[RMDB]
RNA sequence: GGGAACGACUCGAGUAGAGUCGAAAAAGCGCGAAGCAUCACGUCUGGAAACGGAAAUGAAUGAUGCCAUCGCGGAAAUUACGGAGAAAUUUGCGGCCCGGAUUGCACCGAUUAAAACCGAUAUUGAAUGUAUCUAGUGGUUCGCCACUAGAUACAUAAAAGAAACAACAACAACAAC
Reactivity to DMS in 0.01 (KOAc 150mM, MgCl2 10mM, bicine 150mM(pH8.5), 24C), signal-to-noise 4, nucleotides 027 to 126: a050g000c000g030c010g020a080a300g010c010a020u000c000a030c060g010u000c000u000g010g000a100a110a220c030g010g000a000a060a100u000g020a110a080u000g000a010u000g020c020c060a080u000c030g020c010g000g000a050a060a060u000u010a080c090g000g020a120g000a050a060a100u000u000u000g010c010g010g010c020c020c020g000g010a060u000u000g000c090a070c050c010g000a060u000u020a030a020a090a100c090c040g010a090u010a100u010u010g010a150
Reactivity to 2A3 in 0.01 (KOAc 150mM, MgCl2 10mM, bicine 150mM(pH8.5), 24C), signal-to-noise 2, nucleotides 027 to 126: a000g080c000g020c000g010a010a010g000c010a000u000c000a000c010g020u000c000u000g040g050a050a050a020c030g010g080a060a050a040u110g120a080a060u050g000a020u020g000c050c020a200u030c010g000c040g000g000a030a080a010u110u070a040c030g040g010a050g090a080a120a090u100u070u100g020c010g000g000c020c040c000g020g020a050u060u100g020c030a040c030c040g020a040u040u200a050a050a020a030c030c040g040a050u040a120u210u140g120a140